RNA sequence: GGGAACGACUCGAGUAGAGUCGAAAAGAUAUGGACAAGGAUGGUCGCAACAGCUGCUCUCGGAAACGAGAGCAGACAUGCGGCCAUCCCUUGUCCUAAGUCAAACGUUCGCGUUCGCGCGAACGAAGUAUCAUCAUGGGUUCGCCCAUGAUGAUACAAAAGAAACAACAACAACAAC
Reactivity to DMS in 0.01 (KOAc 150mM, MgCl2 10mM, bicine 150mM(pH8.5), 24C), signal-to-noise 3, nucleotides 027 to 126: g000a050u010a300u000g010g000a010c000a000a020g010g020a020u000g010g040u010c010g020c000a010a080c300a220g010c000u000g000c010u000c000u000c010g000g000a160a100a270c000g000a010g010a000g000c000a000g000a010c060a140u000g010c000g010g000c000c000a010u000c030c020c010u000u000g000u000c010c000u010a000a080g020u000c050a090a120a300c020g010u000u000c000g010c020g010u000u030c290g030c000g020c000g000a010a000c000g020a020a060
Reactivity to 2A3 in 0.01 (KOAc 150mM, MgCl2 10mM, bicine 150mM(pH8.5), 24C), signal-to-noise 1, nucleotides 027 to 126: g020a010u070a030u150g000g000a000c000a010a000g020g010a000u010g020g010u020c000g000c000a060a140c030a230g100c010u010g000c010u030c000u000c020g040g030a110a090a040c000g020a000g010a000g030c000a000g000a000c000a020u020g010c000g010g000c000c000a020u000c000c010c000u000u000g000u010c000c000u000a010a000g010u020c010a010a020a110c030g000u010u000c010g020c020g050u060u080c300g000c020g010c000g120a000a010c000g010a050a020
Chemical mapping of a 177-nucleotide RNA with DMS and 2A3. 2A3 adducts were read by reverse transcription with SuperScript II with manganese. The data come from the RNA Mapping Database (RMDB), library TTRDES.